Chemical mapping of a 177-nucleotide RNA with DMS and 2A3. The data come from the RNA Mapping Database (RMDB), library OK2TRN. For 2A3, 12,323 sequencing reads were counted. The reactions ran in a buffer of 150 mM KOAc, 10 mM MgCl2 and 150 mM bicine (pH 8.5), at 24 C. The DMS profile rests on 13,371 reads.
RNA sequence: GGGAACGACUCGAGUAGAGUCGAAAAGGAGAGCCAAUCUACUACAAGCCUAGAGGAGAAUGGUGGGAUGGAUACUGUGGACACGCUAAUGUCAUCAUCGACGACUUCUACGGAUGGCUUAAAUACGCAAACAAGACAAGUUCGCUUGUCUUGUUUGAAAAGAAACAACAACAACAAC
Reactivity to DMS in 0.01 (KOAc 150mM, MgCl2 10mM, bicine 150mM(pH8.5), 24C), signal-to-noise 9, nucleotides 027 to 126: g010g010a140g010a060g020c030c030a070a080u000c040u000a090c100u010a080c140a080a100g010c040c030u000a120g010a090g010g010a120g010a080a050u000g010g020u010g000g000g010a060u000g010g000a090u010a060c050u010g020u010g000g010a090c260a030c070g000c100u010a080a070u010g010u000c030a030u000c040a050u010c060g010a120c120g000a060c040u000u000c040u000a070c090g010g000a070u010g010g000c020u000u000a040a080a110u010a080c260g010
Reactivity to 2A3 in 0.01 (KOAc 150mM, MgCl2 10mM, bicine 150mM(pH8.5), 24C), signal-to-noise 7, nucleotides 027 to 126: g070g040a070g010a000g050c020c010a030a100u030c030u100a110c010u030a040c040a120a030g040c010c010u050a030g000a020g050g040a040g010a140a090u070g030g000u030g020g030g020a030u030g030g020a020u040a110c030u070g050u100g150g030a020c020a010c090g020c050u070a090a030u120g150u120c010a020u010c010a020u060c040g070a040c040g020a060c050u070u000c010u080a040c060g070g010a050u030g020g000c000u000u020a040a070a020u180a030c050g000